[RMDB]
RNA sequence: GGGAACGACUCGAGUAGAGUCGAAAAUAUAUCAAGGAAUGCCAUCUCGAUCUAUAGAGCUAUUGAAGAUGGGGCUUCCAAGUUGGGGCUUAUCAUUAAGAAAGAAGAGACUAUGUGCAGUUAUGACCCUAGAGCUAGGAUUCGUCCUAGCUCUAGGAAAAGAAACAACAACAACAAC
Reactivity to DMS in 0.01 (KOAc 150mM, MgCl2 10mM, bicine 150mM(pH8.5), 24C), signal-to-noise 3, nucleotides 027 to 126: u010a080u020a120u010c030a080a160g000g010a060a040u020g020c050c000a060u010c010u000c010g010a090u000c080u000a220u010a140g000a050g020c180u020a060u000u000g000a100a040g000a020u000g010g000g000g010c050u000u010c020c030a090a100g000u010u000g010g010g010g000c040u000u000a070u000c040a050u010u020a070a090g000a070a070a070g020a070a130g010a090g010a090c080u000a050u000g000u020g020c090a060g010u010u010a100u000g000a120c150
Reactivity to 2A3 in 0.01 (KOAc 150mM, MgCl2 10mM, bicine 150mM(pH8.5), 24C), signal-to-noise 2, nucleotides 027 to 126: u140a000u030a030u130c030a070a010g120g000a160a040u100g090c000c000a020u010c010u000c010g050a010u000c050u110a210u200a230g090a040g100c050u030a030u130u080g030a070a000g010a020u000g000g000g030g130c010u050u020c010c030a060a000g120u090u070g010g000g060g040c060u070u040a030u210c040a070u000u260a040a000g070a040a170a020g000a030a000g050a000g010a030c050u060a040u090g060u050g030c020a010g020u090u080a060u190g090a070c020

Overview: Chemical mapping of a 177-nucleotide RNA with DMS and 2A3. 2A3 adducts were read by reverse transcription with SuperScript II with manganese. In probing experiments dimethyl sulfate is read out at A N1 and C N3, which are open when not base-paired. The reactions ran in a buffer of 150 mM KOAc, 10 mM MgCl2 and 150 mM bicine (pH 8.5), at 24 C. The DMS profile rests on 1,893 reads.